[RMDB]
RNA sequence: GGGAACGACUCGAGUAGAGUCGAAAAAUGCCGCUGAUCAAGGCGCUCGAUCUGCCCGGCGGCCAAGGGCAGCACUUCUUCUUUGACGCCGGCAACGGCGAUUGUGUCGCCUUCUUCUGGUUCGCCGCGAAUGAUAUCACUUCGGUGAUAUCAUUCGAAAAGAAACAACAACAACAAC
Reactivity to 2A3 in 0.01 (KOAc 150mM, MgCl2 10mM, bicine 150mM(pH8.5), 24C), signal-to-noise 3, nucleotides 027 to 126: a010u150g050c050c010g010c110u080g010a160u110c110a050a060g000g030c020g000c010u020c040g080a130u010c020u050g030c000c030c010g020g000c000g010g000c000c000a020a020g020g030g000c010a010g000c020a040c020u120u130c010u170u010c030u090u190u230g030a030c020g020c040c000g000g040c030a100a050c030g010g000c000g010a030u040u150g000u000g060u090c040g000c010c000u050u060c030u090u040c030u040g040g000u110u250c010g020c010c000g030
Reactivity to DMS in 0.01 (KOAc 150mM, MgCl2 10mM, bicine 150mM(pH8.5), 24C), signal-to-noise 4, nucleotides 027 to 126: a100u010g010c100c010g010c050u000g020a060u010c110a080a120g010g010c070g020c050u000c080g000a070u000c030u000g000c050c050c000g010g000c030g010g010c040c010a020a030g010g010g020c060a050g010c090a030c060u000u000c100u000u010c150u000u010u000g010a150c010g020c010c000g010g000c300a080a140c040g000g020c010g000a070u020u000g010u000g010u000c080g010c010c000u010u020c060u010u010c160u000g030g010u000u010c020g010c010c020g000